[RMDB]
This 177-nucleotide RNA was probed chemically with 2A3 and DMS. For 2A3, 2,265 sequencing reads were counted. The data come from the RNA Mapping Database (RMDB), library OK1LIB. Conditions: 150 mM KOAc, 10 mM MgCl2 and 150 mM bicine (pH 8.5), 24 C.
RNA sequence: GGGAACGACUCGAGUAGAGUCGAAAACUUGGUAUACCAAUUUGCGUCGUACAUAGUGAAGAGGGAUACAGUGGACAAGGACAUAGCAGUGUUUCUGUCAGGGUACGUGUCUGGGAUAGUGGGCGGGCAAACCCGAUUUAUUCGUAAAUCGGGUUUGAAAAGAAACAACAACAACAAC
Reactivity to 2A3 in 0.01 (KOAc 150mM, MgCl2 10mM, bicine 150mM(pH8.5), 24C), signal-to-noise 5, nucleotides 027 to 126: c040u070u040g080g020u080a020u050a100c010c000a030a110u050u040u050g030c040g030u070c040g030u070a060c040a130u190a090g050u070g080a090a000g000a040g040g020g020a020u050a060c050a040g050u060g050g000a040c020a100a120g010g010a020c030a030u060a030g090c100a090g100u030g090u070u090u100c020u020g050u070c050a080g020g010g040u120a060c070g050u060g080u090c070u060g040g000g020a060u060a060g060u290g070g000g120c300g050g000g000
Reactivity to DMS in 0.01 (KOAc 150mM, MgCl2 10mM, bicine 150mM(pH8.5), 24C), signal-to-noise 5, nucleotides 027 to 126: c080u010u010g000g000u000a060u020a070c030c030a070a190u010u010u000g020c020g030u030c110g020u020a070c180a100u020a090g010u000g020a070a030g000a270g000g020g000a070u020a020c090a080g000u020g000g010a050c040a060a060g000g010a020c080a060u000a120g020c170a060g020u020g010u000u000u010c020u010g020u010c090a060g000g000g010u020a070c140g020u010g000u030c030u000g000g020g000a170u010a060g020u050g020g000g000c110g000g000g010